Structure probing data (2A3) for a 207-nucleotide construct.
[RMDB]
RNA sequence: GGGAACGACUCGAGUAGAGUCGAAAAACAAGGCUGGCGACAAGAAGCUCUGGCUGAGCCGCAGCGUGUCGGUUUGGGGGAUGAGCACCGACGAGGCGCGCGAGAAGGCGCUCGACGUGGCCGCCGGAUCGGAGGACAAGCCGUGGCUGCGCGAACCGGAUGUGAGAUAGUUCGCUAUCUCACAUCCAAAAGAAACAACAACAACAAC
Reactivity to 2A3 in 0.01 (KOAc 150mM, MgCl2 10mM, bicine 150mM(pH8.5), 24C), signal-to-noise 2, nucleotides 027 to 156: a000c060a050a050g050g000c020u060g010g030c030g100a050c110a050a070g120a060a010g030c040u000c010u070g050g040c040u040g010a020g000c000c020g010c030a010g000c010g070u150g110u180c020g000g050u070u090u060g080g000g000g020g000a030u050g040a070g180c060a040c030c010g020a020c020g010a120g020g050c020g000c020g000c010g040a010g050a060a100g090g000c110g040c000u020c030g300a300c060g010u030g080g020c020c020g040c020c000g000g040a060u040c030g020g010a040g000g060a020c010a030a050g000c000c000g010u010g030g000c020u010g000c010g000c010g050a050a030c010c070
Source information
Reactivities are given for positions 27 through 156. For 2A3, 892 sequencing reads were counted. The RNA was probed in 150 mM KOAc, 10 mM MgCl2 and 150 mM bicine (pH 8.5) at 24 C.